[RMDB]
RNA sequence: GGGAACGACUCGAGUAGAGUCGAAAACAUCAGUUACUGAGCAUAUUUUGCUGGAAAGGGAAUAUGCUGAAGUAAUGAUGAAUCAUGAACCGCCUCAGGCUGGAAACAGAGCAGGGUAAGUGGUCGCUGAUGUACGGUGUGAAGAUUACGGUUGAACCCCUAUUGUGGUGUUCGCACCACAAUAGGGAAAAGAAACAACAACAACAAC
Reactivity to 2A3 in 0.01 (KOAc 150mM, MgCl2 10mM, bicine 150mM(pH8.5), 24C), signal-to-noise 2, nucleotides 027 to 156: c030a000u020c020a030g080u030u010a010c000u010g020a000g010c010a000u010a040u040u080u040u170g300c100u160g080g050a120a120a060g040g010g020a000a000u000a000u010g000c010u060g060a080a000g000u030a010a000u010g010a020u010g030a000a070u100c070a060u100g030a020a010c000c010g010c020c050u090c070a060g050g010c030u020g010g070a100a010a050c020a060g040a000g010c030a050g000g000g000u060a100a010g020u040g040g000u050c010g010c040u000g040a040u020g020u080a040c040g000g060u100g040u050g090a060a030g030a090u060u130a030c040g010g000u020u010g010a040a020c000